[RMDB]
RNA sequence: GGGAACGACUCGAGUAGAGUCGAAAAUUUUGCUUUAGCUCAUCAAGUGUCUGAGCUUUCUUAAGCUCUUCCUCCCAUGCGGAAACUAACUUACCGUCAGACACGCCUUAACACCUCCAAACCGAGAAGAUCUAGUGUUUUUCGAAACACUAGAUCUAAAAGAAACAACAACAACAAC
Reactivity to 2A3 in 0.01 (KOAc 150mM, MgCl2 10mM, bicine 150mM(pH8.5), 24C), signal-to-noise 2, nucleotides 027 to 126: u020u040u030u050g030c030u010u010u150a010g000c010u010c010a050u030c040a180a080g050u030g040u060c040u030g020a020g000c000u020u040u000c040u080u160a050a000g000c010u000c000u080u090c010c010u010c000c010c030a000u100g030c020g050g030a070a030a070c070u090a050a010c000u070u070a110c010c020g040u020c010a010g010a000c020a010c040g020c010c010u070u060a090a010c020a030c010c000u100c030c020a070a030a050c030c020g060a050g010a100
Reactivity to DMS in 0.01 (KOAc 150mM, MgCl2 10mM, bicine 150mM(pH8.5), 24C), signal-to-noise 4, nucleotides 027 to 126: u010u000u010u020g010c070u010u000u000a040g020c020u000c040a040u000c080a110a090g030u000g000u000c080u000g010a030g010c030u000u000u000c140u010u000a040a080g000c020u000c060u010u000c040c010u000c040c010c040a150u000g020c060g000g000a090a080a090c080u010a040a110c130u010u000a090c070c040g010u000c070a050g000a070c060a050c040g000c060c040u000u010a060a060c090a090c050c010u010c020c030a030a070a110c090c060g000a110g010a120
This 177-nucleotide RNA was probed chemically with 2A3 and DMS. The 2A3 profile rests on 3,089 reads. It was measured as part of the RMDB library OK2TST. High 2A3 reactivity points to a flexible backbone, as in loops and unpaired stretches.